[RMDB]
RNA sequence: GGGAACGACUCGAGUAGAGUCGAAAAUAACUGCCGAAAAUAACGACAGUUUCGAUUACGCCUUAGCUGCAUAAUCGCGGAAUCUGCUUUGCACUGCUCCGAGCGGGGCAUGAUUCCGACGCCAAUCGGGGCUUGCUUUUUAGCGGCGUGUAAACGUCAUCGCUAUAGCGUUCGCGCUAUAGCGAUGAAAAGAAACAACAACAACAAC
Reactivity to 2A3 in 0.01 (KOAc 150mM, MgCl2 10mM, bicine 150mM(pH8.5), 24C), signal-to-noise 2, nucleotides 027 to 156: u110a010a020c020u010g010c000c010g100a030a060a100a170u200a140a030c030g010a010c010a030g020u000u000u040c020g040a010u010u000a020c040g020c020c000u230u220a140g090c260u170g040c040a010u010a020a010u020c000g000c000g000g010a000a000u020c000u000g000c000u030u020u060g000c020a010c020u050g000c010u000c020c000g010a020g000c020g000g000g010g010c000a000u090g000a010u010u000c000c000g020a020c030g010c050c090a010a010u030c000g000g000g000g000c000u020u030g000c000u080u040u120u050u240a090g050c090g080g000c090g000u060g030u110a130a160a040c020g010u010